[RMDB]
RNA sequence: GGGAACGACUCGAGUAGAGUCGAAAACGAUCUGUUCGCAGAUCGAGCUACGGAGACGUAGCAAAGCGCGCGAGGGCCCGGGCGCGCGCCCUACCGGAAAUAAAACCAUAUCCACGUGUGCUAGGAUAUGGCCGGGCCCAAAGAAACAGCACACGUAGAUCCUACUCCUAUUCGUAGGAGUAGGAUCAAAAGAAACAACAACAACAAC
Reactivity to 2A3 in 0.01 (KOAc 150mM, MgCl2 10mM, bicine 150mM(pH8.5), 24C), signal-to-noise 1, nucleotides 027 to 156: c010g000a000u000c000u020g050u100u070c250g000c080a010g000a000u010c010g030a040g040c000u010a010c000g060g000a050g020a060c030g000u060a010g010c000a030a180a000g000c000g000c000g000c030g010a070g000g030g030c010c030c030g000g000g000c000g040c000g000c020g010c000c000c000u130a140c030c010g130g150a100a130a190u300a090a140a030a050c000c000a000u000a000u000c010c000a030c070g000u000g000u000g000c000u000a050g010g000a000u000a010u000g000g000c000c000g000g000g000c000c000c000a010a090a000g020a000a070a010c050a030g000c000a000c000a000c000g010u020a080

Structure probing data (2A3) for a 207-nucleotide construct. Source: RMDB library OK3TST, as collected in RNAgym. For 2A3 the reverse transcriptase was SuperScript II with manganese. The reactions ran in a buffer of 150 mM KOAc, 10 mM MgCl2 and 150 mM bicine (pH 8.5), at 24 C.